The record gives the reactivity of an RNA of 207 nucleotides to 2A3.
Values are in units of 0.01, from 0 to 300, in steps of 10.
RNA sequence: GGGAACGACUCGAGUAGAGUCGAAAAGUCGAGGCUCUAGAAGCGGCCAUGCCCACAGAAGUGGUACACAGAAGCAGGCACAGCCAGCUCCGAGGGCCUUGAGGCUGCCUGGGCCAUACAGCACACUCGCGCGUGCGCGCGCGCACACACACACACAGUACGAUGAUUAGUUCGCUAAUCAUCGUACAAAAGAAACAACAACAACAAC
Reactivity to 2A3 in 0.01 (KOAc 150mM, MgCl2 10mM, bicine 150mM(pH8.5), 24C), signal-to-noise 3, nucleotides 027 to 156: g070u040c000g010a010g000g000c000u010c010u020a040g010a050a010g020c010g010g000c010c010a040u070g020c000c030c010a080c040a040g200a300a050g030u100g060g110u270a110c090a000c010a120g100a120a000g060c100a060g020g040c020a020c020a070g010c010c010a040g000c020u000c010c010g050a040g000g020g000c000c000u020u020g010a010g020g000c000u000g030c010c010u000g020g040g000c000c010a040u100a120c060a070g010c030a020c010a010c090u040c020g000c000g000c010g030u080g050c100g050c020g000c000g000c000g030c110a040c000a000c000a000c000a000c000a000c000a060c010a020